[RMDB]
RNA sequence: GGGAACGACUCGAGUAGAGUCGAAAAGAUAUGGACUGAACUACAGAAAUUAUAUGCUGAUAGUCGGAAACGACUAUUCAGCAAAUAAUCUGCAGUCCUAAGUCAAACAGUAAGUUCGCUUACUGAACCAUUGAAGUCAGUUCGCUGACUUCAAUGGAAAAGAAACAACAACAACAAC
Reactivity to DMS in 0.01 (KOAc 150mM, MgCl2 10mM, bicine 150mM(pH8.5), 24C), signal-to-noise 2, nucleotides 027 to 126: g000a050u010a300u020g000g030a060c010u000g000a110a020c050u010a300c000a000g000a050a100a100u000u000a000u000a090u010g010c000u000g020a050u000a010g020u000c020g020g000a120a060a230c010g000a000c000u000a010u010u000c010a000g000c020a000a050a040u000a020a020u010c000u000g010c040a000g010u010c000c000u000a030a120g010u000c040a190a100a250c030a000g020u020a010a020g020u000u010c300g060c010u010u010a000c000u000g000a130a290
Reactivity to 2A3 in 0.01 (KOAc 150mM, MgCl2 10mM, bicine 150mM(pH8.5), 24C), signal-to-noise 2, nucleotides 027 to 126: g040a030u060a050u130g020g000a000c020u040g010a190a080c060u230a040c300a000g040a010a210a020u300u080a170u060a020u220g020c020u000g000a000u000a020g000u000c000g010g030a000a080a020c020g000a000c000u010a000u020u050c020a020g010c010a000a010a010u000a000a010u050c000u000g050c000a000g000u000c020c010u010a070a000g060u000c040a180a030a140c010a060g010u020a010a000g010u020u210c300g000c180u030u020a010c000u000g040a040a100